[RMDB]
An RNA of 207 nucleotides, treated with 2A3 and read out base by base. Source: RMDB library RSTRND, as collected in RNAgym. For 2A3 the reverse transcriptase was SuperScript II with manganese. The reactions ran in a buffer of 150 mM KOAc, 10 mM MgCl2 and 150 mM bicine (pH 8.5), at 24 C.
RNA sequence: GGGAACGACUCGAGUAGAGUCGAAAAAGAAUCGAAUCGGUCUGCGCCACGAAGUCCGGUUCUAAAACUUAGUGGAUCGCCAAGGAAAGGCCUGUCAAUUGGCAUAGUCCAAGGUUAAAACUUAAAAUUAAUUGACUACACAUGUAGAACUGUCUGUGUUACCAUACCAGUUCGCUGGUAUGGUAACAAAAGAAACAACAACAACAAC
Reactivity to 2A3 in 0.01 (KOAc 150mM, MgCl2 10mM, bicine 150mM(pH8.5), 24C), signal-to-noise 3, nucleotides 027 to 156: a000g110a040a050u150c050g010a000a000u020c000g000g000u000c000u020g020c070g010c040c010a000c020g030a000a000g010u000c000c000g010g010u000u020c010u030a040a050a080a080c110u120u180a000g010u000g010g000a000u010c010g000c020c020a010a000g020g020a020a030a000g020g000c000c000u000g000u020c000a010a030u010u000g010g010c000a010u020a030g030u000c000c000a020a010g020g000u000u010a000a010a030a080c050u110u120a060a000a000a020u040u060a010a020u000u000g000a010c000u140a030c070a010c000a060u200g050u140a060g070a200a060c090u160g030u090c030u030g050u020